Source information:
An RNA of 177 nucleotides, treated with DMS and read out base by base. The reactions ran in a buffer of 150 mM KOAc, 10 mM MgCl2 and 150 mM bicine (pH 8.5), at 24 C. It was measured as part of the RMDB library OK2TRN.

RNA sequence: GGGAACGACUCGAGUAGAGUCGAAAAGCGGACCGGGUUGCCCUGGUCGUCUAGGUCGGCGUGGCAGUAGAACCGGCUGAGUUCCUGCCGACAGUAAAUGGCAUCGGAGGUGGUGACCGGCGAGGUGUGCUCGUUCUGUAUUCGUACAGAACGAGCAAAAAGAAACAACAACAACAAC
Reactivity to DMS in 0.01 (KOAc 150mM, MgCl2 10mM, bicine 150mM(pH8.5), 24C), signal-to-noise 1, nucleotides 027 to 126: g010c010g010g000a080c030c040g030g020g010u010u000g010c120c020c040u000g020g010u000c040g000u010c010u010a100g000g000u000c000g010g010c030g000u010g020g000c080a010g000u020a110g030a100a120c070c090g010g000c120u000g010a270g000u000u000c000c030u000g030c010c030g000a060c070a060g000u000a050a080a060u000g010g000c000a030u000c090g000g000a150g030g020u000g000g040u000g020a070c050c030g000g020c050g000a140g020g000u010g040
For DMS, 1,122 sequencing reads were counted.